[RMDB]
RNA sequence: GGGAACGACUCGAGUAGAGUCGAAAAUGGUAAGACCAUCAUGAAUACCACAGCUAACAGCAGCACUGCCAGCAUGAUAUCUUUACGCUCGCCAAUACGAUUUAGCCACUCAAGAUCAUGGGGAUUCCGCCAUAGUGGUUUUCGAACCACUAUGGCGAAAAGAAACAACAACAACAAC
Reactivity to 2A3 in 0.01 (KOAc 150mM, MgCl2 10mM, bicine 150mM(pH8.5), 24C), signal-to-noise 2, nucleotides 027 to 126: u100g040g010u100a090a020g100a110c030c000a000u050c030a100u110g140a070a010u060a110c000c040a020c030a030g120c040u040a100a070c020a050g040c000a010g030c020a010c060u040g000c030c010a020g010c030a060u050g040a080u090a030u090c060u020u110u070a070c080g010c070u020c010g010c000c010a070a070u100a070c030g010a020u060u050u110a020g020c000c000a020c060u070c040a010a040g030a110u080c010a040u040g010g020g050g020a040u100u030c100
Reactivity to DMS in 0.01 (KOAc 150mM, MgCl2 10mM, bicine 150mM(pH8.5), 24C), signal-to-noise 2, nucleotides 027 to 126: u000g000g010u000a110a090g000a300c020c040a020u000c100a100u000g000a140a120u010a120c070c010a050c060a080g020c060u000a030a100c130a080g030c100a050g000c030a130c060u000g020c050c030a100g000c060a080u000g000a080u000a120u000c060u000u000u000a090c030g000c060u000c070g050c010c020a060a090u000a050c130g000a080u000u000u010a150g000c000c030a100c020u000c060a050a050g010a080u000c080a060u000g000g000g000g010a300u000u000c020
The data come from the RNA Mapping Database (RMDB), library OK2TRN. Chemical mapping of a 177-nucleotide RNA with 2A3 and DMS. For 2A3, 1,495 sequencing reads were counted. For DMS, 966 sequencing reads were counted. For DMS the reverse transcriptase was MarathonRT.